Structure probing data (2A3 and DMS) for a 177-nucleotide construct. Source: RMDB library OK2TRN, as collected in RNAgym. The DMS profile rests on 1,683 reads. For DMS the reverse transcriptase was MarathonRT.

RNA sequence: GGGAACGACUCGAGUAGAGUCGAAAACAAUUUUCAACGGAACACAAAUUUCUCCAAUAGAACUUAGUAAAUGAUUGUUUUGUGUUCUUUUGUGUGAUGGUUGGCCUGUUGAGGACAUGAAAGGAGAUCUGUGUAAAGCUUUCGAGCUUUACACAGAAAAAGAAACAACAACAACAAC
Reactivity to 2A3 in 0.01 (KOAc 150mM, MgCl2 10mM, bicine 150mM(pH8.5), 24C), signal-to-noise 1, nucleotides 027 to 126: c010a040a010u090u050u090u090c020a040a000c000g020g010a020a000c020a000c010a010a000a110u040u110u010c040u030c000c030a000a000u000a130g040a020a040c110u250u070a090g020u290a140a230a160u080g100a130u070u140g080u140u000u000u000g000u000g010u010u070c030u030u030u020u030g090u000g000u050g030a020u010g050g090u080u010g020g050c040c000u000g040u010u000g020a060g000g000a030c090a060u190g070a100a080a100g090g030a090g020a080
Reactivity to DMS in 0.01 (KOAc 150mM, MgCl2 10mM, bicine 150mM(pH8.5), 24C), signal-to-noise 2, nucleotides 027 to 126: c030a060a010u000u000u010u000c040a040a040c010g020g020a050a030c030a020c010a010a030a110u000u020u010c040u000c100c080a090a100u000a080g000a100a140c080u000u010a090g000u010a050a110a090u010g000a120u010u000g000u010u000u000u000g010u010g010u000u000c000u010u000u000u000g010u010g030u000g030a040u000g010g030u010u000g010g010c060c000u020g010u000u000g010a050g000g010a100c100a030u000g000a070a080a050g020g040a060g000a100